[RMDB]
RNA sequence: GGGAACGACUCGAGUAGAGUCGAAAAUUCAUGCUGGCGAGGUAACCGAUACCAAUAAUAUCUGGACUUCAAUCGAUCAGCUUCAUGCUGAUCGUAUUGGCCAUGGGGUAUCUGCAAUAAACGAUCCCUGUAGCUAGGAGUUCGCUCCUAGCUACAGAAAAGAAACAACAACAACAAC
Reactivity to DMS in 0.01 (KOAc 150mM, MgCl2 10mM, bicine 150mM(pH8.5), 24C), signal-to-noise 3, nucleotides 027 to 126: u000u000c080a050u010g030c030u000g010g000c040g040a040g010g010u000a060a110c080c050g000a040u000a050c010c020a090a110u010a110a190u010a120u010c100u000g010g000a090c070u000u010c000a020a030u000c010g000a020u000c000a000g000c010u000u000c300a150u020g000c000u000g020a020u000c000g030u000a000u000u000g000g000c040c030a040u010g040g020g000g020u000a000u000c020u010g020c140a080a110u000a050a070a140c170g000a100u000c040c040
Reactivity to 2A3 in 0.01 (KOAc 150mM, MgCl2 10mM, bicine 150mM(pH8.5), 24C), signal-to-noise 2, nucleotides 027 to 126: u030u000c010a000u060g000c010u050g060g000c080g040a040g000g080u100a070a070c030c050g000a040u020a030c010c060a070a030u180a240a080u060a070u120c050u040g050g040a040c010u110u060c130a020a020u030c000g000a000u010c000a000g060c000u120u230c150a110u220g020c000u010g000a000u000c010g030u020a020u000u000g030g000c010c020a050u080g000g000g000g090u030a010u010c020u030g020c010a040a120u050a210a110a020c060g030a040u150c010c010
The record gives the reactivity of an RNA of 177 nucleotides to DMS and 2A3. For 2A3, 1,578 sequencing reads were counted. For 2A3 the reverse transcriptase was SuperScript II with manganese. The RNA was probed in 150 mM KOAc, 10 mM MgCl2 and 150 mM bicine (pH 8.5) at 24 C.